Chemical mapping of a 177-nucleotide RNA with DMS and 2A3. Values are in units of 0.01, from 0 to 300, in steps of 10.
RNA sequence: GGGAACGACUCGAGUAGAGUCGAAAAGACUGGCAGGCACGGUACCGUUCAAGCCAGAGUGCAUAUGCUUUUUUUUUUUUAGCAUAUGCGCGUACCUCUACCAUAGCCUGCGAAGGUAGAAAAUAGAGGGUAGCCUUUAGUUCGCUGGAGGCUACCCAAAAGAAACAACAACAACAAC
Reactivity to DMS in 0.01 (KOAc 150mM, MgCl2 10mM, bicine 150mM(pH8.5), 24C), signal-to-noise 7, nucleotides 027 to 126: g000a130c020u010g000g000c000a030g010g010c110a090c060g000g010u040a060c160c060g020u010u020c120a070a080g000c030c030a050g000a200g010u000g000c000a010u000a010u000g000c000u000u000u000u000u000u000u000u010u010u010u000u000a040g000c000a000u000a000u000g000c000g000c010g000u020a040c090c040u010c010u000a010c020c010a160u010a170g010c010c010u010g000c040g010a060a050g000g000u010a030g000a040a050a060a080u030a060g010a300
Reactivity to 2A3 in 0.01 (KOAc 150mM, MgCl2 10mM, bicine 150mM(pH8.5), 24C), signal-to-noise 9, nucleotides 027 to 126: g080a030c030u030g030g000c010a030g010g020c030a010c100g060g040u090a070c070c130g020u060u110c100a070a020g050c040c030a050g040a030g070u020g000c000a000u000a000u000g010c000u020u040u040u040u010u010u010u010u010u030u000u080a000g000c000a000u000a000u000g000c000g000c000g000u030a040c000c000u000c000u000a010c000c010a050u100a050g030c000c010u020g000c020g030a040a010g030g010u080a020g130a050a070a020a030u170a040g110a070

2A3 adducts were read by reverse transcription with SuperScript II with manganese. It was measured as part of the RMDB library OK1LIB. DMS adducts were read by reverse transcription with MarathonRT.